[RMDB]
This 177-nucleotide RNA was probed chemically with DMS and 2A3. Conditions: 150 mM KOAc, 10 mM MgCl2 and 150 mM bicine (pH 8.5), 24 C. For DMS the reverse transcriptase was MarathonRT.
RNA sequence: GGGAACGACUCGAGUAGAGUCGAAAAGAUAUGGAUCAUGAACUACUAUCCUCACCUUGGAUAGCGUUUGACGUGCAUCGGAAACGAUGCACCGAGCUACAAGGUGAGGAUAGCAUGAUCCUAAGUCGUUAUUGAUAUAGUUCGCUAUAUCAAUAACAAAAGAAACAACAACAACAAC
Reactivity to DMS in 0.01 (KOAc 150mM, MgCl2 10mM, bicine 150mM(pH8.5), 24C), signal-to-noise 9, nucleotides 027 to 126: g010a100u010a300u010g010g000a010u000c000a010u000g000a080a060c100u020a300c010u000a000u000c000c000u000c010a010c000c000u000u000g000g010a180u010a010g020c020g010u010u010u020g010a170c300g000u000g000c000a010u000c000g000g000a130a120a220c000g010a010u000g000c000a000c010c010g000a080g010c000u000a060c010a010a010g000g010u000g000a000g000g000a000u000a000g000c010a000u000g000a010u000c000c000u000a020a090g010u010c100
Reactivity to 2A3 in 0.01 (KOAc 150mM, MgCl2 10mM, bicine 150mM(pH8.5), 24C), signal-to-noise 9, nucleotides 027 to 126: g130a060u220a050u300g000g000a000u000c000a000u020g020a070a090c090u270a060c010u000a300u010c000c000u000c000a010c000c010u080u010g140g180a290u210a080g000c010g060u150u300u300g110a080c050g000u000g000c000a000u000c000g040g010a070a090a060c010g000a010u000g000c000a000c000c000g000a020g000c000u010a030c010a000a000g000g060u000g000a000g000g000a000u000a000g000c000a000u000g000a000u000c000c000u010a030a010g050u030c070